Chemical mapping of a 207-nucleotide RNA with 2A3 and DMS.
Source: RMDB library RNAMAK, as collected in RNAgym.
RNA sequence: GGGAACGACUCGAGUAGAGUCGAAAAUCCACCUUCGGGUGGAAGGUCGCGUACUACUAAGCUUUUGACGUCGAAUUGUGUGUAGUCCCAAAUAGGACGCAGAUACAUGAAAUCCGACGAUAAGCUUAGUAUCGCCAUGCUCUGCAUUCGUGCAGAAAUAAGUGUCAUCAUUCGUGAUGACACUUAUAAAAGAAACAACAACAACAAC
Reactivity to 2A3 in 0.01 (KOAc 150mM, MgCl2 10mM, bicine 150mM(pH8.5), 24C), signal-to-noise 5, nucleotides 027 to 156: u010c000c000a010c000c000u070u100c300g150g000g010u050g000g020a040a040g090g050u210c070g000c010g020u070a110c030u000a000c000u010a020a000g020c010u040u040u130u160g270a140c030g000u000c000g020a080a070u050u060g040u000g010u010g000u050a130g010u050c030c010c020a190a300a120u300a060g000g000a000c010g020c080a050g030a150u110a040c010a010u040g100a040a090a070u050c070c000g000a000c020g020a070u010a060a000g000c000u000u000a000g000u000a010u040c010g000c020c000a060u170g020c030u000c000u040g000c000a000u030u100c150g100u060g000c000a010g040a030a050
Reactivity to DMS in 0.01 (KOAc 150mM, MgCl2 10mM, bicine 150mM(pH8.5), 24C), signal-to-noise 4, nucleotides 027 to 156: u000c000c010a030c000c000u000u000c300g060g010g030u000g020g000a000a050g010g020u010c040g000c040g020u010a150c130u020a030c000u000a010a020g020c010u000u000u000u000g050a210c080g020u000c000g030a020a020u000u020g010u010g020u000g030u000a140g000u000c000c010c010a080a140a250u000a050g000g010a030c000g020c140a100g010a300u000a030c010a040u000g010a030a020a020u000c010c000g010a030c010g000a150u000a040a030g010c000u000u000a020g010u000a000u000c000g020c010c050a190u000g020c070u000c010u000g010c010a100u000u010c210g040u000g020c000a020g010a020a170
The RNA was probed in 150 mM KOAc, 10 mM MgCl2 and 150 mM bicine (pH 8.5) at 24 C.